[RMDB]
RNA sequence: GGGAACGACUCGAGUAGAGUCGAAAAGAAAUGGCUUCUAAAACAAAGAAGGCUAUUAUCGACGUAAAGAAACAAUUUGAGGCUGUUCAUAAACAAUUUGAAUUGGUUCAAAUUUUGAAUGAAAAAGGAGCAUAUACGGUUUCGACCGUAUAUGCUCAAAAGAAACAACAACAACAAC
Reactivity to 2A3 in 0.01 (KOAc 150mM, MgCl2 10mM, bicine 150mM(pH8.5), 24C), signal-to-noise 2, nucleotides 027 to 126: g000a010a000a000u050g040g000c010u000u000c050u090a250a200a270a090c100a050a160a000g000a050a000g090g000c000u000a030u000u060a300u030c030g050a070c000g100u120a070a060a070g050a050a190a040c070a020a040u010u040u040g000a000g000g100c000u000g000u070u040c000a000u040a000a100a110c080a150a060u020u020u000g010a040a010u050u070g210g080u260u020c000a000a040a050u080u110u040u020g080a080a070u150g010a030a020a030a030a030g200
Reactivity to DMS in 0.01 (KOAc 150mM, MgCl2 10mM, bicine 150mM(pH8.5), 24C), signal-to-noise 1, nucleotides 027 to 126: g000a020a020a000u000g000g000c020u010u000c030u000a100a050a110a250c300a050a010a110g000a000a030g030g040c120u000a020u030u000a030u040c020g030a180c250g000u040a100a000a020g000a060a180a030c010a030a000u120u000u050g000a060g000g000c000u000g010u000u010c000a000u010a020a080a100c220a050a120u090u000u020g000a020a000u000u000g000g040u000u000c000a000a000a000u000u000u000u000g020a110a180u030g020a010a010a040a100a180g020

Source: RMDB library RFM100, as collected in RNAgym. Structure probing data (2A3 and DMS) for a 177-nucleotide construct. 2A3 adducts were read by reverse transcription with SuperScript II with manganese. Conditions: 150 mM KOAc, 10 mM MgCl2 and 150 mM bicine (pH 8.5), 24 C. Values cover nucleotides 27 to 126. The DMS profile rests on 1,188 reads.